Source: RMDB library ARCHII, as collected in RNAgym. An RNA of 207 nucleotides, treated with 2A3 and read out base by base. Reactivities are rounded to 0.1 and cut off at 0 and 3. Values cover nucleotides 27 to 156.
[RMDB]
RNA sequence: GGGAACGACUCGAGUAGAGUCGAAAAGGGGAUGUUCUGGAUUCGACAGGUAUAGUUUGAGUUCGGAUUGCGCUUCGUAGGUUGUGUCUACGUAAAAACGCUCAGUUUAAAUUAUAACUGCAAAAAAUAAUAACAAUUCUUACGCUUUAGCUGCCUACUUCAUAAGCUCGUUCGCGAGCUUAUGAAGAAAAGAAACAACAACAACAAC
Reactivity to 2A3 in 0.01 (KOAc 150mM, MgCl2 10mM, bicine 150mM(pH8.5), 24C), signal-to-noise 1, nucleotides 027 to 156: g090g010g000g020a030u020g020u090u010c030u070g040g050a080u030u060c020g010a000c070a050g120g000u160a110u090a100g060u040u030u140g030a040g010u020u070c030g000g000a030u000u090g050c090g000c030u050u130c030g000u000a000g000g030u030u040g050u040g030u120c030u020a020c000g050u060a020a020a020a020a020c000g040c040u040c000a000g010u010u010u050a110a180a040u160u040a050u050a110a010c000u030g000c000a020a020a000a040a070a130u120a030a120u150a200a010c000a040a010u100u080c040u080u040a050c020g010c020u030u040u090a030g000c020u010g010c000c030u030a020

Record summary: The RNA was probed in 150 mM KOAc, 10 mM MgCl2 and 150 mM bicine (pH 8.5) at 24 C.